[RMDB]
RNA sequence: GGGAACGACUCGAGUAGAGUCGAAAAGAGCUUUUGUCCGGAAUGGUUCCGCCGUGAUCGGGCCAUGCAAUAGUUGCCAACGACAACUAUGCUCCCGUUGCUCAGGCAGCGUAACGCUGCUUGAAAGAUGACGGCAAUCGCUUCGGCGAUUGCCGAACAAUGGGACGAGGUUCGCCUCGUCCCAUUGAAAAGAAACAACAACAACAAC
Reactivity to 2A3 in 0.01 (KOAc 150mM, MgCl2 10mM, bicine 150mM(pH8.5), 24C), signal-to-noise 1, nucleotides 027 to 156: g010a030g000c030u130u200u120u130g040u010c000c010g040g010a060a020u060g080g000u190u100c080c030g020c000c000g100u160g040a220u130c020g000g050g000c070c000a080u120g000c000a090a190u000a090g010u020u020g030c030c050a140a030c150g090a080c010a020a000c000u010a010u110g030c020u020c000c010c000g010u040u070g030c020u010c020a000g000g030c010a000g000c040g080u150a080a020c190g000c030u010g000c000u000u000g050a020a020a010g160a060u150g010a040c000g000g000c000a000a000u000c000g010c000u080u020c200g130g020c000g010a000u030u000g000c000c000g010a020a000